[RMDB]
Background:
This 207-nucleotide RNA was probed chemically with DMS and 2A3. Reactivities are given for positions 27 through 156. For 2A3 the reverse transcriptase was SuperScript II with manganese. For DMS, 1,976 sequencing reads were counted. The reactions ran in a buffer of 150 mM KOAc, 10 mM MgCl2 and 150 mM bicine (pH 8.5), at 24 C. Reactivities are rounded to 0.1 and cut off at 0 and 3.
RNA sequence: GGGAACGACUCGAGUAGAGUCGAAAAUCGCUUUUCGAAGCGAAUUCGUGGGGUCGACGGCUGAAAGAGGGACAUGACCUGAAGCCUCCACGGGUCAACAGCCUACCCACCUUUCAACCGUCGACGGAGGCACCCGACUAUCACCGUUCGCGGUGAACAGAUCCUGAAUAUUCGUAUUCAGGAUCUGAAAAGAAACAACAACAACAAC
Reactivity to DMS in 0.01 (KOAc 150mM, MgCl2 10mM, bicine 150mM(pH8.5), 24C), signal-to-noise 1, nucleotides 027 to 156: u000c040g040c010u000u000u000u000c200g020a020a080g030c010g010a040a130u000u020c000g000u020g010g000g080g020u000c010g030a050c000g000g000c000u000g010a040a010a040g040a200g050g000g010a110c080a300u000g010a020c020c000u000g010a090a120g010c050c000u000c010c060a300c080g000g000g030u030c040a030a180c060a170g030c020c020u000a300c040c110c080a080c090c050u000u010u010c020a040a030c030c010g000u000c000g030a010c000g040g020a040g020g030c020a150c010c010c000g010a140c110u010a170u000c040a000c000c010g050u040u000c200g030c030g000g040u000g010a060a240
Reactivity to 2A3 in 0.01 (KOAc 150mM, MgCl2 10mM, bicine 150mM(pH8.5), 24C), signal-to-noise 5, nucleotides 027 to 156: u010c010g010c010u050u060u050u110c250g110a030a000g010c020g030a030a080u120u110c110g060u290g090g030g020g010u010c000g010a010c000g000g000c010u010g020a010a010a020g180a210g030g030g000a010c040a090u060g000a000c000c000u010g030a100a010g010c000c000u000c000c000a010c010g000g010g000u000c020a100a090c010a190g150c000c000u170a200c090c050c090a210c090c050u010u000u000c010a020a000c000c000g000u000c000g000a010c000g000g000a000g010g000c010a010c010c000c000g060a070c080u180a110u170c000a000c030c000g030u090u070c290g020c020g110g000u010g000a020a000